[RMDB]
RNA sequence: GGGAACGACUCGAGUAGAGUCGAAAAGCGUACUACCACGUGCCAGCUAUGAGGUUAAGACAGACGCUUCCCAAAUAGGAAGCGUCAAUGACGACCCAUAGCGGUAAUUCGUGGUAUCGCAAACGACUGUGCUAGGGUUCGCCCUAGCACAGUCGAAGAAAUUGUAGAUGUUCGCAUCUACAAUUUCAAAAGAAACAACAACAACAAC
Reactivity to DMS in 0.01 (KOAc 150mM, MgCl2 10mM, bicine 150mM(pH8.5), 24C), signal-to-noise 1, nucleotides 027 to 156: g040c000g020u030a020c080u000a050c010c010a040c010g000u020g000c060c010a220g120c000u000a000u000g010a140g000g000u000u000a080a230g000a220c080a120g010a020c010g020c030u000u000c000c020c020a050a130a270u010a030g020g020a030a010g040c020g040u000c000a010a050u020g010a140c040g000a030c010c000c010a040u010a020g030c000g010g000u000a030a070u000u000c010g070u000g000g010u000a010u000c010g000c000a110a130a180c010g000a070c000u010g020u000g040c050u000a020g000g000g070u010u000c300g000c000c010c000u000a010g030c000a040c000a000g000u010c000g000a010a110
Reactivity to 2A3 in 0.01 (KOAc 150mM, MgCl2 10mM, bicine 150mM(pH8.5), 24C), signal-to-noise 3, nucleotides 027 to 156: g010c000g030u090a070c030u000a000c010c010a000c000g000u010g040c040c070a150g010c030u000a010u030g060a260g130g040u070u040a130a060g060a080c030a030g100a030c010g000c010u000u010c010c030c040a230a200a040u290a040g000g000a000a000g010c010g010u010c000a000a020u040g000a010c050g010a010c000c000c000a000u000a000g010c010g000g000u030a060a090u110u100c010g000u000g000g010u010a010u120c010g000c000a050a040a060c010g000a000c000u000g000u010g000c000u010a020g000g040g000u090u080c160g080c000c000c000u000a000g010c000a000c010a000g000u000c000g000a000a000

The record gives the reactivity of an RNA of 207 nucleotides to DMS and 2A3. High DMS reactivity at an A or C suggests that its Watson-Crick edge is free. The RNA was probed in 150 mM KOAc, 10 mM MgCl2 and 150 mM bicine (pH 8.5) at 24 C. For DMS the reverse transcriptase was MarathonRT.